[RMDB]
RNA sequence: GGGAACGACUCGAGUAGAGUCGAAAAGUUGAGAGCGUUUAACUUAAGUCUUUUUUAUUAGCUUAAAAAAACUAUAUUCAAGUGGUGGUAGUCCGCCACUCUAAGGGGACGCCUUUAGAAGAAGAGGGAAAGGCACUAAGCUUCGGCUUAGUGCCAAGUAUUGUAGUUGCUUCGGCAACUACAAUACAAAAGAAACAACAACAACAAC
Reactivity to 2A3 in 0.01 (KOAc 150mM, MgCl2 10mM, bicine 150mM(pH8.5), 24C), signal-to-noise 1, nucleotides 027 to 156: g020u030u040g040a050g000a000g010c030g010u130u110u120a110a040c020u030u000a050a020g030u110c050u030u130u070u040u030u040a110u190u130a170g020c020u030u040a070a000a000a000a000a000a000c170u190a160u060a090u230u150c020a010a000g010u000g030g000u000g000g030u060a080g110u040c000c000g000c030c020a000c000u000c000u000a020a030g040g000g000g000a000c020g080c000c000u070u090u090a040g010a120a020g030a030a020g040a080g020g000g000a020a110a110g020g000c000a000c010u000a000a000g030c000u050u130c300g040g030c000u000u000a010g000u000g000c000c000a000a000
Annotation
Source: RMDB library M2RFPK, as collected in RNAgym. An RNA of 207 nucleotides, treated with 2A3 and read out base by base. The 2A3 profile rests on 554 reads. For 2A3 the reverse transcriptase was SuperScript II with manganese. The RNA was probed in 150 mM KOAc, 10 mM MgCl2 and 150 mM bicine (pH 8.5) at 24 C. As a SHAPE reagent, 2A3 marks flexible, mostly unpaired nucleotides at the ribose 2'-OH.